[RMDB]
RNA sequence: GGGAACGACUCGAGUAGAGUCGAAAAAAAGGCAGAACAUGACAUUAUGGGCAGAGACUUUGACAUCGACAAGUAUGUUGACAGGAUAGUUGAAGGUAAGAGCUAUUCAUUCGAUCAAGCAAGAACAUACAUAAGGAACUAUGAGCCUGUCAUAGAAAUCAUUUACCUCCUUCGGGAGGUAAAUGAUAAAAGAAACAACAACAACAAC
Reactivity to DMS in 0.01 (KOAc 150mM, MgCl2 10mM, bicine 150mM(pH8.5), 24C), signal-to-noise 2, nucleotides 027 to 156: a040a020a080g020g030c040a090g000a070a070c060a120u010g000a060c050a070u000u000a090u000g020g010g020c020a060g000a100g010a050c060u000u000u000g010a060c020a070u030c080g000a080c020a070a120g000u000a010u000g000u000u020g000a080c050a090g000g000a060u000a010g030u000u000g010a050a030g030g020u000a070a100g000a100g010c030u000a030u000u000c000a080u010u010c060g010a160u000c050a090a110g040c030a080a070g020a060a050c050a050u000a030c020a060u010a030a100g010g000a040a100c030u000a040u000g030a070g020c070c020u000g010u010c020a060u000a080g000a120a110
Reactivity to 2A3 in 0.01 (KOAc 150mM, MgCl2 10mM, bicine 150mM(pH8.5), 24C), signal-to-noise 3, nucleotides 027 to 156: a000a000a000g070g000c020a020g020a060a050c030a120u060g080a040c030a050u100u060a080u260g030g010g000c020a010g020a010g020a040c030u040u100u100g030a040c040a050u050c080g050a050c030a080a010g020u040a030u090g050u030u050g010a040c050a050g000g020a010u010a010g020u010u110g070a050a000g040g000u070a060a020g000a010g050c000u020a030u030u080c070a100u070u120c050g060a040u070c040a100a000g050c020a070a040g060a100a020c030a020u130a060c010a020u140a110a050g070g000a000a060c020u050a030u070g000a000g040c010c080u070g030u040c000a000u010a020g040a010a100